[RMDB]
RNA sequence: GGGAACGACUCGAGUAGAGUCGAAAAUGCCAAAGUUACCUAAGGCUUCUACCCUCUCAACUAUUGGGUCUGUACUAUCAUCUGGUCUCUCUAUUGCUUCUUUGGGUUUGUCUAUAUUUUCAAUUAUUGAGGAUAGAAGGGUAACAGAGCUUACACAUCACCUUCCCAUUUUCGAAUGGGAAGGUGAAAAAGAAACAACAACAACAAC
Reactivity to DMS in 0.01 (KOAc 150mM, MgCl2 10mM, bicine 150mM(pH8.5), 24C), signal-to-noise 1, nucleotides 027 to 156: u000g040c000c010a040a170a220g000u000u000a060c000c010u000a150a250g030g010c080u000u000c020u000a120c000c000c000u000c010u000c110a080a170c140u000a100u020u000g000g000g020u000c010u000g020u000a100c000u000a050u000c080a080u010c070u000g010g000u000c040u000c020u010c030u000a080u000u000g010c020u000u000c020u000u010u000g010g060g030u000u000u010g010u000c030u000a110u010a070u000u000u000u000c010a080a110u000u000a120u020u000g000a050g000g010a040u000a030g030a120a060g000g010g010u000a070a050c010a140g000a140g010c000u000u000a100c060a060c140a250
Reactivity to 2A3 in 0.01 (KOAc 150mM, MgCl2 10mM, bicine 150mM(pH8.5), 24C), signal-to-noise 2, nucleotides 027 to 156: u150g000c010c000a080a020a030g010u010u030a040c010c010u080a180a110g150g000c000u050u010c010u020a030c000c030c000u040c010u020c020a070a120c030u090a060u110u100g070g010g040u000c040u020g020u050a120c020u060a050u130c050a060u000c030u040g030g040u050c010u000c010u000c020u060a030u150u150g040c030u000u040c010u050u010u050g000g000g000u020u030u060g020u000c040u000a050u000a070u200u120u030u120c000a020a010u020u110a070u180u180g000a010g000g010a000u010a020g020a010a030g030g010g000u000a000a000c010a000g080a000g030c050u080u090a050c070a000c010a130

Overview: The record gives the reactivity of an RNA of 207 nucleotides to DMS and 2A3. Reactivities are given for positions 27 through 156. The DMS profile rests on 2,402 reads. Reactivities are rounded to 0.1 and cut off at 0 and 3.